[RMDB]
RNA sequence: GGGAACGACUCGAGUAGAGUCGAAAAGAAAGAAAGAAAGACACGAGGGCAGCGAUGACCCGCCAGGCGAUCUGUGGUCGCCAUGUGCCCGGCGUCGAGCAGUGGCGCGCCCGGGCCGUCAGAUCAAAAAACGCCCACUACUUCGGUAGUGGGCGAACCAUACCAUACCCUUCGGGGUAUGGUAUGGAAAAGAAACAACAACAACAAC
Reactivity to 2A3 in 0.01 (KOAc 150mM, MgCl2 10mM, bicine 150mM(pH8.5), 24C), signal-to-noise 1, nucleotides 027 to 156: g040a000a050a020g080a020a090a010g020a020a110a000g060a010c030a000c060g020a090g000g000g000c050a070g050c120g050a050u090g090a110c000c000c030g020c020c010a020g000g000c000g010a020u000c040u170g170u080g270g000u030c010g000c010c030a050u080g050u110g000c000c010c010g010g010c030g030u140c030g000a030g030c060a040g010u140g060g010c000g000c010g020c040c100c000g020g020g000c000c000g010u040c050a060g010a170u150c050a000a030a000a080a080a000c010g000c000c000c000a000c000u000a000c030u030u050c080g080g010u000a000g000u000g030g010g000c000g000a000a000
Structure probing data (2A3) for a 207-nucleotide construct. It was measured as part of the RMDB library M2RFPK. 2A3 adducts were read by reverse transcription with SuperScript II with manganese. The RNA was probed in 150 mM KOAc, 10 mM MgCl2 and 150 mM bicine (pH 8.5) at 24 C.